Source: RMDB library OK3TST, as collected in RNAgym. Chemical mapping of a 207-nucleotide RNA with DMS and 2A3.
RNA sequence: GGGAACGACUCGAGUAGAGUCGAAAAUGUGGUUAGCAUUCUGCUGUGGCAUUGGGUGGUCUUUAGCAUUUUAUUGGACUAUUUUAUGAAACAUCUCCAAAGAAAUAUGUUGGAACUGGUAUUUAUUACCUUAAUCUUAUUGUCUGCCUUGAGAAGCUAAUUGAUCAAGUUUCGACUUGAUCAAUUAAAAAGAAACAACAACAACAAC
Reactivity to DMS in 0.01 (KOAc 150mM, MgCl2 10mM, bicine 150mM(pH8.5), 24C), signal-to-noise 3, nucleotides 027 to 156: u010g040u000g020g030u000u000a110g030c020a120u010u000c050u010g040c030u000g030u000g000g010c030a100u010u010g020g000g080u010g010g020u000c010u000u010u000a080g020c060a090u010u000u010u010a180u020u030g020g020a050c050u000a050u010u000u000u020a100u030g020a120a050a050c030a080u000c020u010c000c020a030a060a300g020a050a050a110u000a040u010g020u000u000g020g020a070a090c140u000g010g020u000a020u000u020u010a090u040u000a020c000c020u000u000a060a100u000c030u020u000a050u010u000g010u000c010u000g010c010c020u010u000g010a150g010a070a080g010c070
Reactivity to 2A3 in 0.01 (KOAc 150mM, MgCl2 10mM, bicine 150mM(pH8.5), 24C), signal-to-noise 3, nucleotides 027 to 156: u090g010u030g000g030u050u050a020g020c010a060u090u060c040u150g050c030u060g010u030g030g020c030a050u030u050g020g030g000u040g010g000u050c000u070u070u070a030g000c000a030u030u100u070u050a110u040u170g030g000a000c020u040a060u110u140u040u040a120u110g130a090a060a010c040a060u040c030u010c050c000a070a070a030g060a020a150a030u160a080u070g040u050u030g020g010a050a030c080u050g010g010u040a070u030u230u010a110u140u100a060c000c000u010u030a060a050u080c020u050u080a060u090u080g030u020c040u020g050c000c000u050u050g050a050g010a120a000g090c060

The RNA was probed in 150 mM KOAc, 10 mM MgCl2 and 150 mM bicine (pH 8.5) at 24 C. Reactivities are given for positions 27 through 156. 2A3 is a SHAPE reagent: it acylates the 2'-hydroxyl of flexible nucleotides of all four kinds. DMS adducts were read by reverse transcription with MarathonRT.